[RMDB]
RNA sequence: GGGAACGACUCGAGUAGAGUCGAAAAGACGUUAGUCAUCUUUCUAAAAAGGAGCAAAAAGCAUAUAACCGUUUCGUAGAAUCUGUAGAAAACGGUAAUUUACCAGUACUACCAUGUAUUGAAAUGGCUCUCUGACUCCGUUCGCGGAGUCAGAGAGAAAAGAAACAACAACAACAAC
Reactivity to 2A3 in 0.01 (KOAc 150mM, MgCl2 10mM, bicine 150mM(pH8.5), 24C), signal-to-noise 1, nucleotides 027 to 126: g000a000c000g000u020u120a050g000u080c000a000u000c000u000u020u000c000u170a000a000a230a250a300g080g000a210g130c080a140a140a000a190a000g070c120a000u130a000u050a300a040c000c000g020u000u020u010c000g000u000a000g080a000a110u290c280u210g140u000a130g150a000a170a000a000c080g000g000u000a050a050u160u030u270a130c000c020a000g010u030a070c000u000a020c000c000a030u160g110u000a190u020u000g000a160a040a040u010g020g000